[RMDB]
RNA sequence: GGGAACGACUCGAGUAGAGUCGAAAAUACGCGAGGUUCGCCUCGCGUAAAAGAGGAGGGUAAACGUGAGCGUACGUAGUGCUGUACAUCGUUCCUACACGAAUGCACAUGGUUUCGACCAUGUGAAUACAAUCUUUAGCUUCGGCUAAAGAUUGUAAAAAGAAACAACAACAACAAC
Reactivity to DMS in 0.01 (KOAc 150mM, MgCl2 10mM, bicine 150mM(pH8.5), 24C), signal-to-noise 5, nucleotides 027 to 126: u000a010c000g020c000g020a010g010g050u000u000c280g020c000c000u010c000g010c000g020u000a000a020a050a130g010a070g010g000a090g010g000g010u000a050a060a100c040g010u010g010a090g020c150g030u000a030c080g000u010a100g020u000g010c030u000g010u010a060c080a130u000c010g010u000u000c000c000u010a070c220a090c170g000a090a090u010g000c000a010c000a010u000g000g000u000u000u010c180g000a030c000c000a010u000g000u000g000a060a120
Reactivity to 2A3 in 0.01 (KOAc 150mM, MgCl2 10mM, bicine 150mM(pH8.5), 24C), signal-to-noise 4, nucleotides 027 to 126: u040a000c010g010c010g000a000g010g010u040u130c160g080c050c000u000c000g000c000g010u000a000a010a010a000g090a040g110g060a060g060g010g040u100a070a100a010c050g030u040g040a040g100c080g030u050a010c030g020u060a060g060u060g080c060u060g030u080a030c000a050u030c020g020u030u010c000c010u040a050c040a010c080g200a120a050u230g010c010a000c000a000u000g020g000u040u080u130c200g040a000c000c000a000u000g000u010g020a000a000